This 177-nucleotide RNA was probed chemically with DMS and 2A3. The data come from the RNA Mapping Database (RMDB), library TTRDES. 2A3 adducts were read by reverse transcription with SuperScript II with manganese. Conditions: 150 mM KOAc, 10 mM MgCl2 and 150 mM bicine (pH 8.5), 24 C.
RNA sequence: GGGAACGACUCGAGUAGAGUCGAAAAGAUAUGGAUCAGAGCGUCGAUAAGGGUCCUGAUCGGAAACGAUCAAGACCCUUUUGACGACGUCUCUGAUCCUAAGUCAAAACGGACGUUCGCGUCCGAACUAAAUGAGUGAGUUCGCUCACUCAUUUAGAAAAGAAACAACAACAACAAC
Reactivity to DMS in 0.01 (KOAc 150mM, MgCl2 10mM, bicine 150mM(pH8.5), 24C), signal-to-noise 6, nucleotides 027 to 126: g010a050u010a300u010g010g000a010u000c000a010g000a020g000c010g010u010c010g030a140u000a020a020g000g010g010u000c000c030u010g000a010u000c000g020g000a130a090a200c000g010a020u000c000a010a020g010a000c000c010c000u000u000u000u000g000a240c100g010a010c000g010u010c010u000c000u000g000a000u000c010c000u000a010a070g010u000c040a090a060a140a220c020g000g000a020c010g020u000u010c230g020c020g010u000c010c000g000a030a140
Reactivity to 2A3 in 0.01 (KOAc 150mM, MgCl2 10mM, bicine 150mM(pH8.5), 24C), signal-to-noise 2, nucleotides 027 to 126: g040a000u070a030u180g000g020a020u010c000a010g010a000g030c010g010u000c010g020a060u020a150a010g000g030g020u000c000c020u000g000a000u010c010g000g030a080a110a030c020g000a010u000c020a000a000g030a000c020c030c000u000u010u010u010g020a000c000g010a000c010g030u000c000u030c000u030g000a010u000c000c000u000a000a010g010u010c020a010a050a090a130c020g000g000a010c000g030u050u100c300g070c020g210u000c000c000g020a070a040